[RMDB]
RNA sequence: GGGAACGACUCGAGUAGAGUCGAAAAGACUUUACAGCAAUUGCUUACUUAAGGGACGAAUUGCUCACAAAGCAUCCGACCUUAGGUUCUGGUAAUGACGAGGCGACCCGUCGUACCUUAGCUAUCGCUAAGCUACGGGAGGCGAAUGGUGAUCGCGGAUACAUGCUAAGUUCGCUUAGCAUGUAUCAAAAGAAACAACAACAACAAC
Reactivity to 2A3 in 0.01 (KOAc 150mM, MgCl2 10mM, bicine 150mM(pH8.5), 24C), signal-to-noise 9, nucleotides 027 to 156: g010a000c010u010u010u020a030c030a070g070c060a110a140u010u010g010c010u150u140a010c000u010u010a010a000g010g010g060a070c010g030a100a100u190u150g000c010u020c020a190c070a050a140a010g000c000a000u010c000c020g010a020c000c000u000u000a000g020g010u040u050c050u080g010g000u010a000a020u020g050a030c020g000a000g010g000c010g030a130c000c010c000g010u000c000g000u010a010c010c000u020u000a000g000c020u100a100u300c180g000c020u020a020a010g000c000u000a000c010g000g010g020a050g080g000c020g020a050a090u180g100g030u100g080a070u010c010g000c030g040
Reactivity to DMS in 0.01 (KOAc 150mM, MgCl2 10mM, bicine 150mM(pH8.5), 24C), signal-to-noise 4, nucleotides 027 to 156: g000a050c000u000u010u010a020c020a130g010c070a060a050u000u000g010c010u000u000a040c010u000u000a040a020g020g010g010a250c030g020a020a010u000u000g040c000u010c090a160c300a100a120a110g020c010a050u010c010c010g010a100c010c000u000u000a020g010g000u000u000c080u000g020g020u010a030a040u000g010a210c020g000a040g010g010c010g010a300c000c020c000g010u000c010g010u000a020c100c000u000u000a010g020c010u000a080u010c180g010c010u000a010a010g020c050u000a010c000g000g020g010a070g020g020c000g000a050a090u010g010g010u010g010a070u010c000g000c080g030

An RNA of 207 nucleotides, treated with 2A3 and DMS and read out base by base.
As a SHAPE reagent, 2A3 marks flexible, mostly unpaired nucleotides at the ribose 2'-OH.
Source: RMDB library PDB130, as collected in RNAgym.
For DMS, 9,027 sequencing reads were counted.
DMS adducts were read by reverse transcription with MarathonRT.
The reactions ran in a buffer of 150 mM KOAc, 10 mM MgCl2 and 150 mM bicine (pH 8.5), at 24 C.
Values cover nucleotides 27 to 156.